[RMDB]
RNA sequence: GGGAACGACUCGAGUAGAGUCGAAAAACAUCCUCAAGGAGCAAGUGGGGAUGUACCGGUACCACAGCGAGCUCACCGCCACGCACCCCUUCUCCUCGCCGUGGUGGCAGUGGCCCCUGCUCAUCAAGUAUAUUAACAAGUUCGCUUGUUAAUAUACAAAAGAAACAACAACAACAAC
Reactivity to 2A3 in 0.01 (KOAc 150mM, MgCl2 10mM, bicine 150mM(pH8.5), 24C), signal-to-noise 8, nucleotides 027 to 126: a000c000a010u020c000c000u020c020a030a120g190g000a070g090c050a120a080g120u050g030g010g000g000a010u020g010u020a050c000c030g000g210u070a060c020c020a030c030a050g040c030g040a020g010c020u050c060a040c020c020g010c020c010a050c050g080c010a110c010c010c000c020u080u070c040u030c020c010u030c020g070c030c020g030u040g010g010u010g020g010c030a020g020u060g060g030c000c010c000c010u030g020c020u020c020a070u060c000a100a050
Reactivity to DMS in 0.01 (KOAc 150mM, MgCl2 10mM, bicine 150mM(pH8.5), 24C), signal-to-noise 8, nucleotides 027 to 126: a050c050a020u000c000c000u000c030a100a150g010g010a070g010c090a120a120g020u000g010g000g000g000a030u000g010u010a040c040c020g010g010u010a070c030c030a040c060a070g010c050g010a070g020c100u010c050a080c060c050g000c030c020a040c070g010c070a130c040c010c030c060u000u000c050u000c050c020u000c040g000c050c050g020u000g010g010u000g010g010c020a050g010u000g010g000c030c010c010c080u000g010c020u000c030a120u010c150a080a150